[RMDB]
Chemical mapping of a 177-nucleotide RNA with DMS and 2A3. For 2A3 the reverse transcriptase was SuperScript II with manganese. For DMS the reverse transcriptase was MarathonRT. It was measured as part of the RMDB library M2PK50.
RNA sequence: GGGAACGACUCGAGUAGAGUCGAAAAUUUACGGUAUUCGUACCGUAAACGAGCAAGCAAGCAGCGCAACGAGACAAGACCAUAAUAAGAUCGAGCAUGCUGAUAGUAGGAUCUUCGGAUCCUACAAGUAUCAAACUUUCUUCGGAAAGUUUGAUACAAAAGAAACAACAACAACAAC
Reactivity to DMS in 0.01 (KOAc 150mM, MgCl2 10mM, bicine 150mM(pH8.5), 24C), signal-to-noise 4, nucleotides 027 to 126: u000u000u010a000c010g010g020u000a010u010u010c200g010u000a010c010c000g010u000a000a010a010c100g020a120g000c100a060a090g010c080a050a050g010c040a040g000c050g030c050a070a070c110g020a100g000a060c100a060a050g020a080c060c090a050u000a090a090u010a120a090g010a040u000c060g010a110g000c040a070u000g010c080u010g010a080u000a080g000u000a010g000g000a010u000c000u000u020c160g010g000a010u000c000c000u000a000c000a030a080
Reactivity to 2A3 in 0.01 (KOAc 150mM, MgCl2 10mM, bicine 150mM(pH8.5), 24C), signal-to-noise 4, nucleotides 027 to 126: u000u000u010a000c000g000g000u020a030u020u090c160g040u030a030c000c000g000u000a000a000a000c050g030a040g070c050a090a000g020c000a040a030g020c010a020g040c010g010c080a050a120c050g020a010g040a070c040a090a020g050a040c030c030a090u090a260a040u120a200a080g070a090u070c020g020a020g010c010a020u060g000c040u080g030a090u090a080g000u000a010g010g000a010u000c010u010u010c170g070g010a000u000c000c010u000a000c010a010a000